[RMDB]
RNA sequence: GGGAACGACUCGAGUAGAGUCGAAAACACUUGGAGUUCGCUCCAAGUGAAACCAUUGCCGAUUGGCAAUAAUACCGCAGGCGGUAAAGGGGAACAAAUAAGAAAGCGAAGACUUCGGUCUUCGCAACAAUAGCUAUCUGUUCGCAGAUAGCUAUUGAAAAGAAACAACAACAACAAC
Reactivity to 2A3 in 0.01 (KOAc 150mM, MgCl2 10mM, bicine 150mM(pH8.5), 24C), signal-to-noise 9, nucleotides 027 to 126: c000a000c000u000u000g010g000a010g010u060u080c120g110c100u000c000c000a000a000g000u000g000a020a000a000c010c010a020u010u030g010c020c040g300a300u140u300g010g000c000a000a010u110a040a020u050a010c010c020g030c100a120g220g000c070g000g030u050a090a070a050g050g000g010g010a050a050c050a090a120a060u230a120a100g140a190a080a010g010c000g000a000a000g000a000c010u020u070c230g020g010u000c000u000u000c000g010c000a000a000
Reactivity to DMS in 0.01 (KOAc 150mM, MgCl2 10mM, bicine 150mM(pH8.5), 24C), signal-to-noise 9, nucleotides 027 to 126: c010a000c010u000u010g010g010a020g010u010u010c250g020c000u000c000c000a010a010g010u010g000a040a090a140c050c020a060u000u000g010c000c000g020a200u010u010g010g020c000a010a020u000a120a110u010a070c050c030g030c080a120g010g010c040g020g010u010a020a070a090g000g000g010g010a150a080c180a040a070a090u010a090a110g000a060a100a110g010c000g010a010a010g000a010c000u000u000c190g020g000u000c000u000u000c000g010c000a020a020